[RMDB]
RNA sequence: GGGAACGACUCGAGUAGAGUCGAAAAAUGCUGAGAUUAAAGGCAUGUGCCAUCACCACCUGAACAACAGCAGCUUUCUAAGGAACCAGUAAGGCACUACAGACUUUUCAUAUAACAUCACCUUCAUUCUCUCACAACUAAUUCUACAAAACAGAUAGGAUUAAUCCACGUUCGCGUGGAUUAAUCCAAAAGAAACAACAACAACAAC
Reactivity to 2A3 in 0.01 (KOAc 150mM, MgCl2 10mM, bicine 150mM(pH8.5), 24C), signal-to-noise 1, nucleotides 027 to 156: a000u100g000c050u110g010a010g010a120u190u300a140a050a020g020g000c020a030u060g010u010g090c000c040a090u140c030a000c070c000a010c000c000u030g040a150a030c080a040a000c000a030g080c000a030g000c020u060u090u030c050u130a080a060g020g000a080a060c060c000a010g040u090a040a010g030g060c040a010c060u100a030c000a050g020a040c000u100u000u100u140c120a060u170a020u020a090a150c050a060u100c110a040c090c000u050u020c000a070u020u010c010u040c020u020c060a020c010a080a080c000u070a070a140u060u000c000u020a060c030a040a060a050a020c050a040g040a020u100a100
Overview
An RNA of 207 nucleotides, treated with 2A3 and read out base by base. 2A3 adducts were read by reverse transcription with SuperScript II with manganese. For 2A3, 416 sequencing reads were counted. The data come from the RNA Mapping Database (RMDB), library OK3TST.